[RMDB]
Chemical mapping of a 177-nucleotide RNA with DMS and 2A3. Values cover nucleotides 27 to 126. For 2A3, 829 sequencing reads were counted. Reactivities are rounded to 0.1 and cut off at 0 and 3. It was measured as part of the RMDB library RFMREP.
RNA sequence: GGGAACGACUCGAGUAGAGUCGAAAAUUCUUAAUUCCAGGCUGUCAUAUGCACCUGCCACCGCUUUUCGUCAAGAAACAGAAACCGCAACAGGGUGUCGCAGUAAUAAUCUUUCAGAAAGCGGGCACGCAUUCUAAAUGUUCGCAUUUAGAAUGCGAAAAGAAACAACAACAACAAC
Reactivity to DMS in 0.01 (KOAc 150mM, MgCl2 10mM, bicine 150mM(pH8.5), 24C), signal-to-noise 1, nucleotides 027 to 126: u030u010c000u000u000a050a120u000u010c120c020a040g010g030c140u030g000u010c070a090u020a090u000g010c060a040c010c020u010g000c040c040a210c040c010g000c000u000u020u000u000c020g010u010c150a010a090g010a060a050a150c160a140g030a090a020a070c010c030g060c040a050a050c030a230g000g000g010u000g010u000c040g000c010a040g020u020a080a080u000a050a160u000c040u000u000u000c050a120g020a010a020a070g030c000g000g010g010c150a070
Reactivity to 2A3 in 0.01 (KOAc 150mM, MgCl2 10mM, bicine 150mM(pH8.5), 24C), signal-to-noise 1, nucleotides 027 to 126: u030u010c020u040u120a060a060u180u000c050c020a050g000g030c130u000g030u090c030a100u060a050u300g050c010a030c030c010u030g030c040c030a100c020c030g080c110u040u040u040u020c030g040u070c060a020a100g020a060a160a010c060a020g040a110a080a010c020c020g010c060a090a020c000a110g190g180g000u060g000u020c060g000c050a010g050u010a000a000u050a040a040u020c000u020u030u030c010a020g020a020a010a010g000c000g020g020g000c040a020
The RNA was probed in 150 mM KOAc, 10 mM MgCl2 and 150 mM bicine (pH 8.5) at 24 C.